[RMDB]
RNA sequence: GGGAACGACUCGAGUAGAGUCGAAAAGCCGAUGAAUUGCCGAGAAGCCUGGCUCGAAAUCGUCGACGCAUCGACGACGGUCCUGCCAUGAGACCGUAUCGAGGACAUGUCGCCUCGAAUGGCGUCGUAUAACAUGAGUGGUUCGCCACUCAUGUAAGAUUUCUAUAUGGUUCGCCAUAUAGAAAUCAAAAGAAACAACAACAACAAC
Reactivity to DMS in 0.01 (KOAc 150mM, MgCl2 10mM, bicine 150mM(pH8.5), 24C), signal-to-noise 2, nucleotides 027 to 156: g050c020c020g010a080u000g010a090a100u000u000g030c030c040g000a130g000a090a140g020c060c050u000g000g000c000u000c010g010a070a070a050u000c040g010u010c010g020a090c140g030c090a180u000c010g000a040c000g000a020c000g000g010u000c010c010u000g050c020c240a120u000g010a080g000a030c010c030g040u000a120u000c010g010a050g000g030a080c050a140u010g020u010c060g010c000c030u000c030g000a050a070u010g000g020c030g040u020c020g010u010a140u000a090a050c000a010u000g010a010g050u000g010g010u000u010c300g020c010c010a030c000u000c000a000u000g000u000a030a130
Reactivity to 2A3 in 0.01 (KOAc 150mM, MgCl2 10mM, bicine 150mM(pH8.5), 24C), signal-to-noise 6, nucleotides 027 to 156: g040c030c010g010a020u100g040a050a210u120u130g040c050c030g050a030g020a130a030g040c040c080u110g030g000c020u020c030g040a060a050a060u020c030g020u020c010g010a030c030g020c100a080u070c020g020a020c000g000a010c000g000g000u000c010c010u050g080c040c040a070u080g020a010g000a110c010c010g020u040a060u020c010g010a000g010g000a010c030a110u210g050u130c090g010c010c000u030c010g000a020a020u050g020g030c010g010u050c040g010u080a100u050a210a000c000a000u000g000a000g000u000g020g030u050u060c150g020c060c000a000c000u010c000a000u000g000u000a000a000